[RMDB]
RNA sequence: GGGAACGACUCGAGUAGAGUCGAAAAAUCAACCUUUGAUAAUUUUAUGAGUACAGCUAAAGAAAUAGUCAGCAAUAUUAUUGAUGGAAUUAAGGCUGUUUUUGAAUCCAUAAAAGAUAUUGACCUAGUGAUAUUUACCAUUCGUGGUAAAUAUCACAAAAGAAACAACAACAACAAC
Reactivity to DMS in 0.01 (KOAc 150mM, MgCl2 10mM, bicine 150mM(pH8.5), 24C), signal-to-noise 2, nucleotides 027 to 126: a090u020c130a080a100c140c080u000u000u000g000a070u000a070a110u010u000u000u000a010u000g000a120g020u000a010c030a040g000c000u000a060a080a130g020a100a070a060u000a110g000u000c050a010g000c040a040a060u000a100u020u020a100u000u010g000a030u000g000g000a030a090u000u000a090a080g000g010c030u000g000u000u000u010u020u040g020a080a100u010c050c010a030u000a000a000a010a050g020a080u020a040u010u010g000a070c200c100u000a120
Reactivity to 2A3 in 0.01 (KOAc 150mM, MgCl2 10mM, bicine 150mM(pH8.5), 24C), signal-to-noise 2, nucleotides 027 to 126: a020u070c030a000a080c020c020u080u110u090g060a050u070a150a050u050u000u000u080a030u000g030a030g040u070a020c030a020g000c020u070a090a070a030g100a060a250a020u080a040g060u010c030a010g000c070a130a090u100a030u300u120a060u150u060g020a010u050g040g090a070a030u050u030a070a050g000g000c000u000g030u000u000u000u080u140g050a000a010u000c010c000a000u010a010a030a000a030g120a040u100a050u150u050g010a030c000c030u040a040
About this RNA
An RNA of 177 nucleotides, treated with DMS and 2A3 and read out base by base. It was measured as part of the RMDB library OK2TST. The reactions ran in a buffer of 150 mM KOAc, 10 mM MgCl2 and 150 mM bicine (pH 8.5), at 24 C. 2A3 is a SHAPE reagent: it acylates the 2'-hydroxyl of flexible nucleotides of all four kinds. For 2A3 the reverse transcriptase was SuperScript II with manganese. The DMS profile rests on 1,334 reads.